[RMDB]
RNA sequence: GGGAACGACUCGAGUAGAGUCGAAAAAGCAGCUACUAUACGUAGUAGCUGCACUGCGGUGACGAUCAACUCUUACCUACUAUGACAAAAACAAUGGUUAGACGUUACUCGUACUGUCUGAGCAGAAGUUUCUUAAAUUGUUCGCAAUUUAAGAAACAAAAGAAACAACAACAACAAC
Reactivity to DMS in 0.01 (KOAc 150mM, MgCl2 10mM, bicine 150mM(pH8.5), 24C), signal-to-noise 9, nucleotides 027 to 126: a080g000c000a010g000c000u000a010c000u000a030u010a100c190g040u000a010g020u000a010g010c000u000g020c000a020c030u000g010c020g010g010u010g000a030c020g000a040u010c110a030a030c040u000c010u000u000a030c010c010u000a100c200u020a080u000g010a140c190a050a060a090a090a110c110a060a060u010g000g000u000u000a020g010a020c190g000u000u000a080c130u000c010g010u000a030c070u000g010u020c060u000g000a180g010c070a060g010a120a150
Reactivity to 2A3 in 0.01 (KOAc 150mM, MgCl2 10mM, bicine 150mM(pH8.5), 24C), signal-to-noise 9, nucleotides 027 to 126: a010g000c000a000g000c000u000a000c000u010a010u030a070c230g110u010a010g000u000a000g000c000u000g000c000a010c020u020g000c010g010g100u050g070a030c010g010a040u050c050a020a030c010u000c000u020u050a010c010c010u020a070c060u100a120u250g120a130c140a080a130a040a050a020c070a090a100u090g010g010u020u020a010g010a030c080g010u010u010a030c040u030c050g020u040a060c030u040g110u100c060u100g090a040g030c020a020g020a190a010